Annotation
Chemical mapping of a 177-nucleotide RNA with 2A3 and DMS. Conditions: 150 mM KOAc, 10 mM MgCl2 and 150 mM bicine (pH 8.5), 24 C. Values cover nucleotides 27 to 126. Values are in units of 0.01, from 0 to 300, in steps of 10.

RNA sequence: GGGAACGACUCGAGUAGAGUCGAAAACGCGUGCCAGCUCAUACUCCCAUCUCUUAUGGCGCGAUCGAAGAGACCACCAAGGCAUGCGACAUCGCGGUGAUUCCCGUGGGUUAUGCCGAUGGGUACCACCGAUGCCCAGAUUCGUCUGGGCAUCGGUAAAAGAAACAACAACAACAAC
Reactivity to 2A3 in 0.01 (KOAc 150mM, MgCl2 10mM, bicine 150mM(pH8.5), 24C), signal-to-noise 2, nucleotides 027 to 126: c030g000c000g030u020g040c000c000a100g060c040u100c130a180u140a170c030u020c000c050c000a060u080c090u000c000u100u080a130u150g040g070c060g000c050g110a080u050c070g030a030a010g090a020g000a000c050c040a040c020c000a100a030g000g040c000a000u040g020c040g040a030c000a120u210c060g000c050g070g080u110g030a180u150u080c000c000c000g000u000g010g050g010u110u100a030u180g050c040c000g030a020u050g000g040g000u010a060c000c000
Reactivity to DMS in 0.01 (KOAc 150mM, MgCl2 10mM, bicine 150mM(pH8.5), 24C), signal-to-noise 2, nucleotides 027 to 126: c070g010c000g050u000g000c040c000a190g000c170u020c090a090u010a130c100u010c000c000c020a260u000c040u000c040u000u000a090u000g000g030c030g000c060g000a040u010c140g000a060a000g000a070g010a070c260c090a130c120c020a020a130g000g000c000a020u000g000c090g020a100c130a040u000c020g000c040g010g020u010g000a160u020u000c100c000c000g040u000g020g010g060u020u000a060u000g010c000c000g000a020u000g000g000g000u000a060c110c050